[RMDB]
RNA sequence: GGGAACGACUCGAGUAGAGUCGAAAAGCUCAGUGUGUGUCGCCCCGUCGUCUAGUGCUGGUUCUAGGGCUGGGGCGUCAGCAUCCAGGACUGACGGGACGGGCAGUAUCUCGCCAUCAACGAUAAAGCUUCAGUUGGUGUUCGCACCAACUGAAGCAAAAGAAACAACAACAACAAC
Reactivity to DMS in 0.01 (KOAc 150mM, MgCl2 10mM, bicine 150mM(pH8.5), 24C), signal-to-noise 1, nucleotides 027 to 126: g000c010u000c060a120g000u010g000u010g050u000g030u010c010g000c040c000c000c000g020u000c030g010u000c030u000a030g020u000g010c070u000g000g000u000u020c100u000a130g000g000g000c010u000g010g020g000g030c050g000u000c000a000g020c000a040u010c080c090a080g020g010a050c020u020g020a020c050g020g010g030a030c050g010g020g020c010a080g010u030a080u000c040u000c060g010c100c020a050u000c050a020a030c070g000a100u000a040a120a100